Background: An RNA of 177 nucleotides, treated with 2A3 and DMS and read out base by base. DMS adducts were read by reverse transcription with MarathonRT. The 2A3 profile rests on 6,481 reads. Reactivities are given for positions 27 through 126. For 2A3 the reverse transcriptase was SuperScript II with manganese. The RNA was probed in 150 mM KOAc, 10 mM MgCl2 and 150 mM bicine (pH 8.5) at 24 C. It was measured as part of the RMDB library TTRDEL.
RNA sequence: GGGAACGACUCGAGUAGAGUCGAAAAGAUAUGGACGUGAAGGACUUUUGACGGUACCAUCGGAAACGAUGGGACCGAUAAGUCCCACGUCCUAAGUCAAAGGAAACACACUUCGGUGUGUUUCCAACCAACGUAUGGUGUUCGCACCAUACGUUGGAAAAGAAACAACAACAACAAC
Reactivity to 2A3 in 0.01 (KOAc 150mM, MgCl2 10mM, bicine 150mM(pH8.5), 24C), signal-to-noise 3, nucleotides 027 to 126: g010a000u020a010u060g000g000a000c000g020u010g090a300a120g050g020a000c030u160u140u300u300g280a080c020g000g010u010a000c010c010a010u010c000g010g000a010a010a010c010g000a000u000g000g000g000a000c010c000g000a000u030a030a040g000u000c000c010c000a010c010g000u000c000c000u010a010a020g020u000c030a080a020a120g000g010a020a000a000c010a000c000a000c050u080u170c300g130g000u000g000u000g000u010u010u020c000c010a000a000
Reactivity to DMS in 0.01 (KOAc 150mM, MgCl2 10mM, bicine 150mM(pH8.5), 24C), signal-to-noise 2, nucleotides 027 to 126: g000a020u000a190u010g000g000a010c000g000u000g000a190a130g040g000a020c000u000u000u000u000g010a150c030g010g000u000a020c000c000a000u000c000g000g000a040a030a090c000g000a010u000g000g000g000a010c010c000g020a080u000a000a030g020u000c000c000c000a000c010g010u000c000c000u000a000a010g000u010c020a090a120a120g010g000a010a020a000c000a000c020a020c000u000u020c210g030g000u010g000u000g000u010u000u010c010c000a040a080